[RMDB]
RNA sequence: GGGAACGACUCGAGUAGAGUCGAAAAGACGAACGAAAACACAAAUGUUCCACGGUGCAGAAGGGUCCGUCACAUGAGGAUCACCCAUGUAACUCGGACAGGAUAUGCUUUUGGGAAAAAGAGAGAAAGUCUCAACAUGAUUCGUCAUGUUGAGACUAAAAGAAACAACAACAACAAC
Reactivity to 2A3 in 0.01 (KOAc 150mM, MgCl2 10mM, bicine 150mM(pH8.5), 24C), signal-to-noise 2, nucleotides 027 to 126: g050a020c050g010a110a000c030g050a030a040a080a000c090a010c040a050a140a140u170g030u050u010c010c030a060c030g090g080u090g000c020a010g000a110a030g070g000g020u010c000c020g060u070c020a020c010a060u090g050a150g030g040a080u200c090a180c070c010c000a000u020g040u030a050a070c030u020c070g020g000a000c020a010g000g120a150u050a000u100g000c000u020u060u070u080g090g020g000a120a080a020a000a010g140a000g000a000g050a040a150
Reactivity to DMS in 0.01 (KOAc 150mM, MgCl2 10mM, bicine 150mM(pH8.5), 24C), signal-to-noise 3, nucleotides 027 to 126: g020a110c090g010a090a110c060g000a080a040a090a060c060a060c050a040a090a080u000g010u000u000c020c020a060c160g000g010u000g010c020a030g000a140a180g000g000g000u000c000c010g020u010c070a040c020a030u000g000a060g010g000a150u000c300a060c030c000c010a020u010g010u020a040a050c060u010c040g010g010a010c050a060g010g010a050u000a050u020g000c010u000u000u000u000g000g000g000a030a050a030a050a050g010a140g010a060g010a080a090